[RMDB]
Description
The record gives the reactivity of an RNA of 177 nucleotides to DMS and 2A3. The RNA was probed in 150 mM KOAc, 10 mM MgCl2 and 150 mM bicine (pH 8.5) at 24 C. For DMS, 972 sequencing reads were counted. 2A3 adducts were read by reverse transcription with SuperScript II with manganese.

RNA sequence: GGGAACGACUCGAGUAGAGUCGAAAAUAAGAGGAGCCGUACCUGUUGGUAUGUCUCAUUAUAAUGACACUACCUUCUUAAAUGGACAAAUUGCGUCUAGCAAUAAUGAGAUUGAGCAAUAACAGGUCCAUUCAAUCUAGUUCGCUAGAUUGAAUGGAAAAGAAACAACAACAACAAC
Reactivity to DMS in 0.01 (KOAc 150mM, MgCl2 10mM, bicine 150mM(pH8.5), 24C), signal-to-noise 1, nucleotides 027 to 126: u000a100a050g010a090g010g010a070g000c030c030g040u020a110c000c010u010g010u020u000g040g020u010a080u000g010u000c000u000c010a000u000u000a020u000a090a170u010g000a020c030a030c070u020a060c120c080u010u030c110u000u010a030a100a110u030g010g000a030c150a020a040a080u000u010g020c020g000u010c000u000a100g020c190a070a020u000a010a010u000g010a020g010a000u000u000g000a090g000c060a060a050u010a060a040c040a020g000g010u000
Reactivity to 2A3 in 0.01 (KOAc 150mM, MgCl2 10mM, bicine 150mM(pH8.5), 24C), signal-to-noise 4, nucleotides 027 to 126: u200a040a020g080a040g130g040a030g050c020c030g040u060a020c000c000u030g030u050u060g030g050u100a060u090g000u010c000u000c010a010u010u010a010u000a030a120u110g000a000c000a010c030u040a040c030c000u080u090c040u100u190a210a250a170u230g000g000a020c040a060a120a090u140u090g010c030g020u010c040u030a040g100c040a010a060u000a040a010u030g000a010g010a010u030u120g060a060g060c040a060a050u080a100a030c000a010g000g000u000